Notes: Structure probing data (DMS and 2A3) for a 177-nucleotide construct. The reactions ran in a buffer of 150 mM KOAc, 10 mM MgCl2 and 150 mM bicine (pH 8.5), at 24 C. As a SHAPE reagent, 2A3 marks flexible, mostly unpaired nucleotides at the ribose 2'-OH. Reactivities are given for positions 27 through 126.
RNA sequence: GGGAACGACUCGAGUAGAGUCGAAAACCGCAAGGCGUAAUGCGGGCACCAGUAACUCCUACCCUAUGGUGUCUCCUAUCUGUAGGUCCCAGUGGAGCGAUGAAGCCUGCCCAGCGGGGCUUGGCGGUGAUGGCUGUAGAUUCGUCUACAGCCAUCAAAAAGAAACAACAACAACAAC
Reactivity to DMS in 0.01 (KOAc 150mM, MgCl2 10mM, bicine 150mM(pH8.5), 24C), signal-to-noise 5, nucleotides 027 to 126: c000c000g010c080a070a040g000g010c030g010u020a050a090u020g010c050g010g000g010c050a090c060c020a050g010u050a200a110c060u000c040c030u010a120c060c020c020u010a040u010g000g000u010g000u010c070u020c040c070u000a070u030c040u010g030u010a040g000g000u000c060c070c050a090g030u010g010g000a050g010c050g010a150u030g000a150a120g010c060c040u010g010c020c010c010a150g010c150g010g000g000g000c020u000u000g010g010c000g010g000
Reactivity to 2A3 in 0.01 (KOAc 150mM, MgCl2 10mM, bicine 150mM(pH8.5), 24C), signal-to-noise 7, nucleotides 027 to 126: c000c000g000c020a020a050g080g000c040g080u160a080a050u110g010c000g000g010g000c000a030c010c010a020g020u040a030a040c020u010c010c010u030a060c010c000c010u030a040u060g040g010u030g050u040c070u050c030c010u070a120u100c020u040g100u040a020g010g050u040c030c020c010a040g050u080g030g030a060g020c030g010a040u070g070a110a030g040c010c020u010g000c010c000c000a060g070c070g040g030g030g000c010u040u070g060g010c020g000g020